[RMDB]
RNA sequence: GGGAACGACUCGAGUAGAGUCGAAAAUGCUGGUGGUCGAUCCAAAGCUCUCCUUGGAUCAUCCUGCUGGCUCACCCACCGUAGUCGUACAGGUUCCUGUUCUCUUCCGAUGGAGGUGCCACAAAAAUAACAUGAGACGAUUCGUCGUCUCAUGUUAAAAAGAAACAACAACAACAAC
Reactivity to DMS in 0.01 (KOAc 150mM, MgCl2 10mM, bicine 150mM(pH8.5), 24C), signal-to-noise 3, nucleotides 027 to 126: u010g000c020u010g000g040u030g000g010u000c180g000a040u000c010c010a000a030a180g030c030u000c060u000c060c020u010u000g000g000a010u020c020a060u000c110c030u010g070c000u000g040g000c010u000c210a110c010c000c020a120c140c070g000u020a020g000u010c050g020u010a060c140a070g010g010u010u010c030c040u000g010u000u000c020u010c050u010u020c050c020g000a160u020g010g010a080g000g000u010g000c050c080a070c120a010a070a040a080a120
Reactivity to 2A3 in 0.01 (KOAc 150mM, MgCl2 10mM, bicine 150mM(pH8.5), 24C), signal-to-noise 7, nucleotides 027 to 126: u190g010c020u020g000g020u020g000g040u050c130g000a010u000c000c000a010a030a030g030c040u020c020u020c040c010u000u000g020g000a010u000c010a010u050c020c020u060g020c010u010g010g000c020u030c060a110c010c010c000a020c020c030g080u080a030g050u050c030g030u040a050c030a060g030g050u030u050c010c020u050g040u100u030c040u010c000u090u050c030c020g090a100u110g060g050a030g010g030u060g030c020c010a080c050a030a110a030a010a030